[RMDB]
RNA sequence: GGGAACGACUCGAGUAGAGUCGAAAAGGGGAUAUUGGUCCAGAUCUGCGCAACGGCCAACCGGUCCAGCAUCGCGUAACACUGCAGCAAAAGACAAGGGAGUAUAUUUGGGCUACUUCCGACAUGCGAAAUGCACUACUUUCGAGUAGUGCAUUUCAAAAGAAACAACAACAACAAC
Reactivity to 2A3 in 0.01 (KOAc 150mM, MgCl2 10mM, bicine 150mM(pH8.5), 24C), signal-to-noise 6, nucleotides 027 to 126: g060g000g000g020a020u050a060u200u140g060g000u020c010c000a020g040a120u020c020u060g010c010g000c040a030a070c040g040g000c010c010a040a100c060c040g040g000u050c010c000a020g040c020a040u070c040g000c010g030u030a070a020c050a010c080u090g010c020a040g020c030a090a050a020a050g070a060c070a070a070g010g000g030a030g000u010a090u010a040u140u190u100g040g010g000c000u010a000c000u010u010c020c010g020a070c010a040u140g030c050
Reactivity to DMS in 0.01 (KOAc 150mM, MgCl2 10mM, bicine 150mM(pH8.5), 24C), signal-to-noise 5, nucleotides 027 to 126: g000g000g000g000a060u030a070u010u020g030g040u030c030c020a070g000a050u020c040u010g030c050g030c120a100a070c160g000g000c040c060a110a110c140c070g000g020u010c020c060a060g010c070a040u000c040g020c030g000u010a050a100c090a080c050u000g000c050a060g000c080a100a060a050a100g000a060c150a100a160g000g020g010a010g000u000a010u030a110u000u030u010g000g010g010c100u010a020c040u000u000c000c000g000a120c190a050u010g000c280